[RMDB]
RNA sequence: GGGAACGACUCGAGUAGAGUCGAAAAGAAUACUCAGACAAAGCCCAGACUUUGGAGAGCGCCACAUUGCGUUAUUACUUAAAUCCCAAUGGGUGAAGAAAAAUGAGAAAAUCGGCGCAGUCAACGAUGGUGAUAGUCGAUUCGUCGACUAUCACCAAAAAGAAACAACAACAACAAC
Reactivity to DMS in 0.01 (KOAc 150mM, MgCl2 10mM, bicine 150mM(pH8.5), 24C), signal-to-noise 1, nucleotides 027 to 126: g000a170a150u000a040c070u000c030a130g000a280c050a030a090a230g000c000c070c230a090g030a110c080u000u000u010g010g000a140g010a030g000c020g000c010c030a070c190a000u000u030g010c060g010u000u010a020u000u000a080c080u000u000a040a110a170u010c030c000c000a070a100u000g030g000g000u000g030a090a030g000a030a120a120a080a000u000g010a120g000a090a050a010a100u000c090g010g000c030g010c050a110g000u000c070a050a090c120g000a160